[RMDB]
Structure probing data (DMS and 2A3) for a 177-nucleotide construct. For 2A3 the reverse transcriptase was SuperScript II with manganese.
RNA sequence: GGGAACGACUCGAGUAGAGUCGAAAACCCUAACUACUAUACAGCGAAACCACUGCUAGGGGAACGGGCCUAGCAAAAACAGCGGGGAAAGAAGACCCUGUUGAGCUUGACUCUAGUCUGAUAUUGCGUUCCCUAACUAGUUCGCUAGUUAGGGAACAAAAGAAACAACAACAACAAC
Reactivity to DMS in 0.01 (KOAc 150mM, MgCl2 10mM, bicine 150mM(pH8.5), 24C), signal-to-noise 2, nucleotides 027 to 126: c020c000c010u010a060a120c170u000a060c040u000a070u040a060c070a050g010c000g010a070a080a180c090c140a080c080u010g000c020u000a020g010g010g010g010a090a060c160g020g000g010c030c040u000a040g000c020a010a010a080a110a090c040a000g020c030g010g000g010g000a050a110a140g000a200a160g030a100c000c020c030u000g000u000u000g000a120g000c040u000u000g000a150c080u020c030u010a050g010u000c050u000g000a070u010a050u000u010g000c300
Reactivity to 2A3 in 0.01 (KOAc 150mM, MgCl2 10mM, bicine 150mM(pH8.5), 24C), signal-to-noise 6, nucleotides 027 to 126: c000c000c010u020a050a080c030u090a020c030u040a020u060a130c030a020g010c040g110a100a050a070c060c010a060c070u040g010c010u020a010g000g030g020g050a120a020c080g040g030g050c000c010u030a010g000c010a000a030a030a010a010c010a000g010c040g010g000g010g050a120a100a120g300a090a010g060a150c000c000c000u000g010u010u010g010a020g010c000u050u080g030a040c000u030c020u040a040g060u010c050u080g120a100u090a110u220u120g050c020

Annotation: The RNA was probed in 150 mM KOAc, 10 mM MgCl2 and 150 mM bicine (pH 8.5) at 24 C. The data come from the RNA Mapping Database (RMDB), libraries RFM100 and RFMREP.